[RMDB]
RNA sequence: GGGAACGACUCGAGUAGAGUCGAAAACUGUGUCAGAUGAUUGAAGUUGUCUGAUGCAAUUUGAGCUUGCUAUAGCAAGAAAGUCUAACCUAUUCCAGUGUUCCCCUCCAUGAGACCAACUGUUAUAGAAUCUGACUACCUUCGGGUAGUCAGAUUCAAAAGAAACAACAACAACAAC
Reactivity to 2A3 in 0.01 (KOAc 150mM, MgCl2 10mM, bicine 150mM(pH8.5), 24C), signal-to-noise 3, nucleotides 027 to 126: c050u020g000u020g000u000c000a000g000a000u030g000a050u050u250g210a280a090g090u020u020g020u000c000u010g000a000u000g000c000a000a020u060u080u130g050a010g010c010u000u020g030c060u100a100u130a300g000c000a000a000g020a170a060a040g090u030c060u040a030a020c020c000u000a080u040u030c020c010a000g020u010g000u050u030c000c020c050c010u010c030c000a060u140g060a060g030a160c020c000a000a050c030u050g020u160u040a200u030a160